[RMDB]
RNA sequence: GGGAACGACUCGAGUAGAGUCGAAAAUUAAAGGAGGAGGAGAAAUAUAGCGAGAGAUCGGUCCUCCCACGCGCCUCUCGCGCUGAUAAGAGGAAUAAGAGGAUGAUUAAUAGAUAGCGCGCAAAAACAUAUUACCCAUGUUCGCAUGGGUAAUAUGAAAAGAAACAACAACAACAAC
Reactivity to DMS in 0.01 (KOAc 150mM, MgCl2 10mM, bicine 150mM(pH8.5), 24C), signal-to-noise 6, nucleotides 027 to 126: u010u010a070a110a090g010g010a080g010g010a040g010g000a090g010a070a100a100u000a080u000a090g010c020g010a050g000a090g000a080u000c030g010g010u000c040c020u000c000c020c020a080c120g010c090g010c090c020u010c020u000c030g020c020g010c090u000g010a100u010a050a070g010a050g000g010a070a040u010a060a080g000a050g000g010a050u010g000a090u010u010a080a100u010a060g000a090u010a050g020c030g020c020g030c250a020a030a070a060a110
Reactivity to 2A3 in 0.01 (KOAc 150mM, MgCl2 10mM, bicine 150mM(pH8.5), 24C), signal-to-noise 4, nucleotides 027 to 126: u100u050a070a030a010g060g020a020g000g010a000g030g030a040g080a070a190a010u210a050u080a090g060c010g010a010g000a000g000a050u060c030g010g050u020c000c010u000c000c000c010a010c030g060c000g010c010c000u010c000u010c010g010c000g000c020u030g030a070u040a200a050g010a010g040g060a060a040u070a090a030g020a020g080g000a030u060g020a020u100u200a110a060u060a100g100a070u070a040g030c020g000c010g000c050a010a060a000a030a020